The record gives the reactivity of an RNA of 177 nucleotides to 2A3 and DMS. 2A3 is a SHAPE reagent: it acylates the 2'-hydroxyl of flexible nucleotides of all four kinds. DMS (dimethyl sulfate) methylates the pairing face of unpaired adenines and cytosines. The 2A3 profile rests on 3,882 reads. The RNA was probed in 150 mM KOAc, 10 mM MgCl2 and 150 mM bicine (pH 8.5) at 24 C. For DMS, 3,217 sequencing reads were counted. Reactivities are rounded to 0.1 and cut off at 0 and 3.

RNA sequence: GGGAACGACUCGAGUAGAGUCGAAAACCAGGGCAUCUCUGCACUCUCAUCGCGACGUCGCUCUGGAUGCUGUUUGCAUAUCCUUGGGGAGUCACUGCUUUGGCACAACAGUCCUGCGAGGUGCUGGUGUAUUUCCGAUGUUCGCAUCGGAAAUACAAAAAGAAACAACAACAACAAC
Reactivity to 2A3 in 0.01 (KOAc 150mM, MgCl2 10mM, bicine 150mM(pH8.5), 24C), signal-to-noise 3, nucleotides 027 to 126: c010c010a020g030g050g000c020a060u030c050u000c070u140g000c030a040c020u020c000u030c020a160u140c040g040c040g110a090c070g170u140c050g030c040u030c030u050g010g000a010u010g010c010u060g080u280u240u190g010c010a040u070a080u180c000c030u040u060g040g000g000g020a020g010u030c020a010c050u050g020c010u080u080u160g080g000c050a040c000a200a050c000a090g030u050c020c010u060g050c020g030a040g000g000u040g050c040u040g000g090
Reactivity to DMS in 0.01 (KOAc 150mM, MgCl2 10mM, bicine 150mM(pH8.5), 24C), signal-to-noise 3, nucleotides 027 to 126: c000c010a130g010g010g030c020a050u010c040u000c040u010g090c020a100c050u000c060u010c060a090u000c090g000c070g030a090c180g010u010c060g000c040u000c060u000g000g030a060u010g000c020u000g050u010u000u000g030c030a070u000a130u000c020c010u000u000g020g010g010g020a090g000u000c050a100c080u010g000c030u000u010u010g010g000c050a070c080a050a050c060a040g000u010c030c050u000g010c060g010a050g000g000u000g000c030u000g010g030